[RMDB]
RNA sequence: GGGAACGACUCGAGUAGAGUCGAAAAGGCUGUCGAAAUACAUUCCUGUGCCGGCAAUACAGUGUGUAUGGAGGUCUCAAUGGCUCGGAAGUGCCAGCAAACCGGCGUAGAUAUUAGCAGACGUAUGAUAGGAUGCAUCCGUUCGCGGAUGCAUCAAUCCUCAUAAAUUCUUCGGAAUUUAUGAGGAAAAAGAAACAACAACAACAAC
Reactivity to 2A3 in 0.01 (KOAc 150mM, MgCl2 10mM, bicine 150mM(pH8.5), 24C), signal-to-noise 2, nucleotides 027 to 156: g020g000c050u030g030u210c000g000a000a000a060u130a030c040a050u040u100c000c020u030g010u050g030c040c050g040g040c060a030a020u080a110c000a020g090u010g000u010g000u110a020u020g020g000a010g060g010u010c050u000c010a090a200u070g000g000c020u060c040g020g060a150a010g040u040g010c000c000a010g060c060a010a010a020c010c000g000g000c000g020u050a030g030a140u090a030u230u170a050g010c050a050g010a070c030g090u140a070u200g110a060u080a030g140g000a010u000g040c000a000u000c000c010g020u010u020c070g000c020g080g000a000u000g020c000a000u000c000a000a000
Reactivity to DMS in 0.01 (KOAc 150mM, MgCl2 10mM, bicine 150mM(pH8.5), 24C), signal-to-noise 2, nucleotides 027 to 156: g060g010c010u010g030u000c010g000a160a150a100u000a020c030a100u010u000c300c060u000g020u000g050c000c000g000g100c030a080a120u000a050c030a070g000u000g020u010g010u010a060u000g000g010a130g010g000u000c040u000c070a110a100u000g000g040c020u000c030g040g040a140a170g000u010g020c010c020a110g030c030a030a110a100c010c030g000g020c020g020u000a020g000a110u000a030u000u000a100g000c010a080g010a070c030g000u000a040u000g020a150u000a110g000g000a030u000g020c020a000u000c000c000g000u010u020c300g050c000g020g000a000u000g010c000a000u000c020a060a090